[RMDB]
RNA sequence: GGGAACGACUCGAGUAGAGUCGAAAAACGAUCGAGAGUACGAGUACUCUCUCACACUCGUUCGAACACGAACACGAUCGAUCGAUCGAUCGUGUGUGUGAGUACACUCGAGUGAUCACUCGUACUCGAGAGAGUACACUCGAACACGAACACUCUCGAGCUACUGAAUUUUCGAAUUCAGUAGCUCAAAAGAAACAACAACAACAAC
Reactivity to DMS in 0.01 (KOAc 150mM, MgCl2 10mM, bicine 150mM(pH8.5), 24C), signal-to-noise 2, nucleotides 027 to 156: a130c020g000a180u000c020g000a240g010a010g010u010a070c020g010a120g030u000a060c040u000c050u000c080u010c020a130c010a040c050u000c000g000u000u000c040g000a130a220c020a040c020g010a090a030c010a020c000g010a030u010c000g040a160u010c270g030a250u010c010g020a010u000c000g060u000g050u000g000u000g010u010g000a130g000u000a130c090a050c060u010c020g020a050g010u000g000a130u000c070a070c120u000c050g010u010a030c030u010c000g010a200g040a120g010a120g000u000a020c030a140c060u010c010g000a080a100c080a110c010g000a110a030c050a080c000u000c000u000c030
Reactivity to 2A3 in 0.01 (KOAc 150mM, MgCl2 10mM, bicine 150mM(pH8.5), 24C), signal-to-noise 8, nucleotides 027 to 156: a000c050g040a050u060c030g010a000g000a000g050u020a030c010g010a010g000u040a030c010u020c000u000c000u010c030a010c000a010c010u070c020g040u120u070c080g130a110a030c090a020c120g050a080a000c030a020c050g020a020u010c010g000a020u100c100g090a230u070c000g010a010u010c020g000u010g000u010g000u010g000u000g020a020g020u060a050c090a050c100u080c050g010a010g010u040g060a110u150c070a020c050u040c050g040u040a010c000u020c010g000a000g000a000g000a000g000u020a020c030a030c040u040c010g100a120a020c080a030c160g100a120a030c070a020c120u070c000u140c170

The record gives the reactivity of an RNA of 207 nucleotides to DMS and 2A3. The 2A3 profile rests on 7,817 reads. 2A3 adducts were read by reverse transcription with SuperScript II with manganese. The RNA was probed in 150 mM KOAc, 10 mM MgCl2 and 150 mM bicine (pH 8.5) at 24 C. For DMS, 4,000 sequencing reads were counted.